[RMDB]
RNA sequence: GGGAACGACUCGAGUAGAGUCGAAAAAUGUAGUUGUCAAAUCGUAUGCUUAUAUCGAUGGGCACACAACUAUAGGCAGAGGUACAACGAUCUGGCCGUCCGCUAUGAUCGGUAACAAACCUCAGGAUCUCUGCCCCAUAUUCGUAUGGGGCAGAGAAAAAGAAACAACAACAACAAC
Reactivity to DMS in 0.01 (KOAc 150mM, MgCl2 10mM, bicine 150mM(pH8.5), 24C), signal-to-noise 2, nucleotides 027 to 126: a060u010g010u000a010g030u000u000g040u000c020a110a170a010u000c010g090u020a030u010g010c270u000u010a070u000a030u000c040g000a010u000g000g010g100c290a100c200a050c020a020a000c000u000a010u000a040g030g010c140a050g010a000g000g000u000a060c210a050a060c000g000a010u000c000u000g010g000c000c270g010u030c250c160g000c020u010a010u000g020a000u000c000g000g000u000a080a060c130a060a110a110c040c010u000c030a140g000g000a180
Reactivity to 2A3 in 0.01 (KOAc 150mM, MgCl2 10mM, bicine 150mM(pH8.5), 24C), signal-to-noise 1, nucleotides 027 to 126: a000u010g010u000a020g020u020u010g030u000c010a000a000a090u050c030g030u150a000u130g190c150u290u130a020u070a030u250c010g050a010u030g000g000g000c160a000c010a000c000a230a020c000u010a000u000a040g140g000c020a030g010a000g000g030u020a050c030a040a060c070g000a010u030c000u010g010g000c000c070g080u060c080c050g000c000u040a020u300g010a010u050c020g000g090u170a080a050c060a050a170a040c020c000u030c010a000g030g030a050